[RMDB]
RNA sequence: GGGAACGACUCGAGUAGAGUCGAAAACUAUAGAGCCUAAAAAUUGACCUACUCUCUUAGAAGAAGUCAAUUGGACCUGAAAUAGUGUCCUUUGUAAGCCAUUAAGUUUGGAGUAUUUGAGGUAAUGAUUGCUGCAUAACUUCGGUUAUGCAGCAAUAAAAGAAACAACAACAACAAC
Reactivity to DMS in 0.01 (KOAc 150mM, MgCl2 10mM, bicine 150mM(pH8.5), 24C), signal-to-noise 2, nucleotides 027 to 126: c030u000a110u000a100g000a130g010c000c010u040a050a070a100a010a040u000u000g000a040c000c040u020a280c110u000c020u000c200u010u010a090g020a050a040g010a080a230g020u000c010a000a020u020u000g010g000a050c050c000u000g000a090a110a220u000a030g010u000g000u030c000c000u000u010u000g000u040a050a150g010c010c010a020u000u000a100a120g010u000u000u010g010g000a040g000u010a020u000u000u000g000a000g000g000u000a060a110u000g000